Conditions: 150 mM KOAc, 10 mM MgCl2 and 150 mM bicine (pH 8.5), 24 C. Chemical mapping of a 177-nucleotide RNA with 2A3 and DMS.
RNA sequence: GGGAACGACUCGAGUAGAGUCGAAAAUGUGGCUCGGAGAGGUCAAGGAUAUGGCUGAUAGGAUUAUUCGCAUGAGGGCUGCGCUCAGAGGCGAGCUGGAGGAGCUGGGAUCGAAGAAAUCCUGGAACAGCUCAAUCUGAUUCGUCAGAUUGAGCUGAAAAGAAACAACAACAACAAC
Reactivity to 2A3 in 0.01 (KOAc 150mM, MgCl2 10mM, bicine 150mM(pH8.5), 24C), signal-to-noise 1, nucleotides 027 to 126: u100g000u040g020g000c010u010c020g050g030a110g040a010g010g040u010c030a030a010g040g000a090u050a070u260g050g000c010u060g050a100u120a020g020g010a010u060u050a050u180u170c050g010c110a030u080g030a090g020g050g000c030u070g010c080g000c030u020c020a050g040a040g080g040c040g000a020g000c020u010g000g050a070g010g020a040g010c020u030g030g000g000a040u110c020g000a030a000g000a070a070a020u040c020c010u020g030g020a020a110
Reactivity to DMS in 0.01 (KOAc 150mM, MgCl2 10mM, bicine 150mM(pH8.5), 24C), signal-to-noise 3, nucleotides 027 to 126: u010g020u010g010g020c030u000c060g000g020a090g010a110g020g020u010c040a080a100g010g010a120u010a070u000g000g000c030u010g000a140u010a070g020g010a040u010u000a150u020u000c090g010c090a080u000g010a140g010g000g010c070u000g000c100g000c050u010c060a080g000a110g000g000c030g010a060g020c030u000g000g010a090g010g000a060g000c030u000g010g000g000a030u000c020g010a080a080g000a070a070a060u010c000c010u010g010g010a110a160
High DMS reactivity at an A or C suggests that its Watson-Crick edge is free.